[RMDB]
RNA sequence: GGGAACGACUCGAGUAGAGUCGAAAACGACGGGAUCUAUGAACCGCCGCAGACGGCUAAAGCCGUUGUCGUGCAAUCCGUUCCGGAGCCCAAGCUGUUCACCGCCGCCGCGGUGGAACCGGAUCCGCACAAGGAAGGUGUUCGCACCUUCCUUGUGAAAAGAAACAACAACAACAAC
Reactivity to 2A3 in 0.01 (KOAc 150mM, MgCl2 10mM, bicine 150mM(pH8.5), 24C), signal-to-noise 2, nucleotides 027 to 126: c040g050a000c030g050g030g040a010u040c040u140a130u300g030a060a050c010c020g020c010c020g000c050a050g070a140c000g010g030c050u150a230a040a070g000c030c030g030u020u040g140u100c060g000u120g030c010a020a180u050c040c010g060u130u050c060c020g060g030a040g030c000c010c020a040a000g050c070u050g000u060u030c050a010c030c060g040c030c050g040c030c090g000c000g000g000u000g030g020a030a020c030c000g010g000a030u000c030c030g040
Reactivity to DMS in 0.01 (KOAc 150mM, MgCl2 10mM, bicine 150mM(pH8.5), 24C), signal-to-noise 3, nucleotides 027 to 126: c090g030a120c120g000g030g020a090u000c070u000a130u020g010a080a200c040c050g010c030c020g000c050a090g010a140c010g000g020c000u000a080a150a100g010c030c020g010u000u000g010u000c090g010u000g010c070a100a120u020c060c050g010u000u000c060c070g030g000a140g020c030c020c070a080a090g020c050u000g020u000u000c130a080c100c050g010c010c120g010c220c100g000c000g020g000u000g000g010a020a090c070c100g010g010a110u000c010c080g060
About this RNA:
Conditions: 150 mM KOAc, 10 mM MgCl2 and 150 mM bicine (pH 8.5), 24 C. An RNA of 177 nucleotides, treated with 2A3 and DMS and read out base by base. For DMS the reverse transcriptase was MarathonRT. For DMS, 1,699 sequencing reads were counted.